[RMDB]
RNA sequence: GGGAACGACUCGAGUAGAGUCGAAAAUAGGUCGUGUUCGCACGACCUAAGAUAAAAAGCAUAAAAUGCCAGUAACCCGAAACACAAGGGAGUGCACCUGGCCUACGAUGUCGUUCGCGACAUCGAAUUCGUUAAUAGCAUUCGUGCUAUUAACGAAAAAAGAAACAACAACAACAAC
Reactivity to DMS in 0.01 (KOAc 150mM, MgCl2 10mM, bicine 150mM(pH8.5), 24C), signal-to-noise 7, nucleotides 027 to 126: u000a000g000g010u000c000g050u010g010u010u010c190g030c000a000c010g000a010c000c000u000a000a010g010a110u010a030a070a080a120a100g000c030a070u010a070a070a050a130u010g010c010c020a010g010u010a110a130c010c000c000g000a120a090a150c160a070c160a080a110g000g000g000a220g010u000g000c030a100c150c010u000g000g000c010c300u010a080c020g010a000u000g010u000c000g010u000u020c210g020c010g000a020c000a000u000c000g010a070a100
Reactivity to 2A3 in 0.01 (KOAc 150mM, MgCl2 10mM, bicine 150mM(pH8.5), 24C), signal-to-noise 4, nucleotides 027 to 126: u050a010g010g000u000c000g000u000g040u040u050c220g010c060a000c000g000a000c000c000u000a000a000g000a000u150a010a090a010a020a000g010c030a010u160a190a230a060a050u130g010c000c010a010g030u070a210a210c010c000c020g040a130a250a010c090a020c030a110a050g010g030g010a060g040u040g020c000a020c030c010u000g000g000c000c010u050a070c010g010a000u010g000u010c010g000u000u070c210g000c000g080a000c000a000u000c000g020a030a120